An RNA of 177 nucleotides, treated with DMS and 2A3 and read out base by base. It was measured as part of the RMDB library OK1LIB. For DMS the reverse transcriptase was MarathonRT. Reactivities are given for positions 27 through 126. The reactions ran in a buffer of 150 mM KOAc, 10 mM MgCl2 and 150 mM bicine (pH 8.5), at 24 C. 2A3 adducts were read by reverse transcription with SuperScript II with manganese.

[RMDB]
RNA sequence: GGGAACGACUCGAGUAGAGUCGAAAAGUAUAUGGGAACAGAUGAGAUUGAUGGAGCAAAACAAUUCAUCGAUUAUUUAAAUGUAAAAGGCAUUCCUCAUUUAUACGUAACUAAUAAUUCAACAAAACACCAUCUACGUAUUCGUACGUAGAUGGUGAAAAGAAACAACAACAACAAC
Reactivity to DMS in 0.01 (KOAc 150mM, MgCl2 10mM, bicine 150mM(pH8.5), 24C), signal-to-noise 3, nucleotides 027 to 126: g000u010a030u020a000u000g000g050g020a060a010c080a110g010a080u020g010a050g010a010u000u000g040a020u000g000g000a050g040c140a120a040a070a170c180a130a020u000u000c000a010u010c000g020a070u010u010a180u000u020u020a040a030a210u010g000u000a100a030a050a080g020g030c150a100u030u000c010c020u000c110a030u010u000u000a000u000a040c050g030u030a100a070c080u010a110a050u050a030a130u040u020c200a070a070c260a030a030a060a120
Reactivity to 2A3 in 0.01 (KOAc 150mM, MgCl2 10mM, bicine 150mM(pH8.5), 24C), signal-to-noise 7, nucleotides 027 to 126: g040u010a040u010a020u100g010g020g020a050a020c040a080g110a170u140g030a060g020a070u010u010g030a010u020g000g030a030g070c130a010a090a030a190c060a060a110u000u000c000a010u010c000g020a030u030u020a160u040u180u150a100a120a060u110g030u080a020a180a080a050g100g010c030a040u040u030c000c000u100c000a020u010u160u060a040u020a010c060g050u050a090a050c110u070a030a110u150a160a120u170u150c110a060a070c040a080a200a020a000